An RNA of 207 nucleotides, treated with DMS and read out base by base. Source: RMDB library M2RFPK, as collected in RNAgym. The RNA was probed in 150 mM KOAc, 10 mM MgCl2 and 150 mM bicine (pH 8.5) at 24 C. For DMS, 1,913 sequencing reads were counted.
RNA sequence: GGGAACGACUCGAGUAGAGUCGAAAAAGUGCACUAGGUACGCCUAGUGCACAUUCCAGGACAUACUGCUGAGGAUGUCAAAAAUGUAGUUGGAGUCCUCAACUGGAUAGGCUACGGCCUAUCCAGAAAAAGACUUGGUUGUUCGCAACCAAGUCAACUACUUCAACUACUUCGGUAGUUGAAGUAGAAAAGAAACAACAACAACAAC
Reactivity to DMS in 0.01 (KOAc 150mM, MgCl2 10mM, bicine 150mM(pH8.5), 24C), signal-to-noise 1, nucleotides 027 to 156: a160g010u000g020c020a020c000u000a000g020g080u000a070c300g030c030c000u000a000g020u020g020c040a020c030a010u010u000c010c040a200g000g020a100c040a020u000a030c060u000g020c160u000g000a080g000g010a100u000g010u010c030a020a070a040a110a080u010g000u010a080g030u000u000g000g010a170g000u010c000c000u010c020a080a140c020u000g010g000a020u010a010g020g060c010u010a150c300g090g000c000c000u030a000u000c010c020a020g010a010a050a150a140a060g000a010c010u010u000g020g010u000u000g030u000u010c290g040c000a000a020c000c000a000a000g000u010c010a000a050